[RMDB]
RNA sequence: GGGAACGACUCGAGUAGAGUCGAAAAGAACUUGUCACAGGAAAGCAAAAUAUUCUCCUGCGCAAGUAUGGCCGUGGUGGUUAUCACUACACCCCAUUCCACUAUGAGCGAGACAACACCUCUUGCCGGAACGGCAAAGGUUCGCCUUUGCCGUUCCAAAAGAAACAACAACAACAAC
Reactivity to 2A3 in 0.01 (KOAc 150mM, MgCl2 10mM, bicine 150mM(pH8.5), 24C), signal-to-noise 1, nucleotides 027 to 126: g040a010a000c000u000u050g110u100c030a000c000a050g000g010a040a060a000g090c090a190a240a200a060u230a140u060u040c010u010c070c000u040g000c000g050c010a000a000g010u020a030u030g090g000c030c020g020u040g020g000u030g020g040u110u080a100u250c030a040c090u140a080c010a100c040c000c000c000a000u100u020c010c010a030c020u030a030u120g100a050g030c000g010a020g000a010c020a090a010c000a140c000c010u020c030u000u040g000c000c070
Reactivity to DMS in 0.01 (KOAc 150mM, MgCl2 10mM, bicine 150mM(pH8.5), 24C), signal-to-noise 1, nucleotides 027 to 126: g000a180a050c020u000u000g000u050c020a100c000a010g020g010a020a080a060g050c290a090a030a160a110u000a110u000u010c180u000c000c000u000g000c100g000c000a000a010g000u020a070u030g000g000c100c080g010u010g000g030u000g000g030u000u000a110u000c050a070c140u010a030c070a100c080c030c040c040a170u000u000c010c000a030c160u000a150u030g010a050g020c070g000a020g000a110c050a010a000c070a080c150c150u000c010u000u000g030c020c170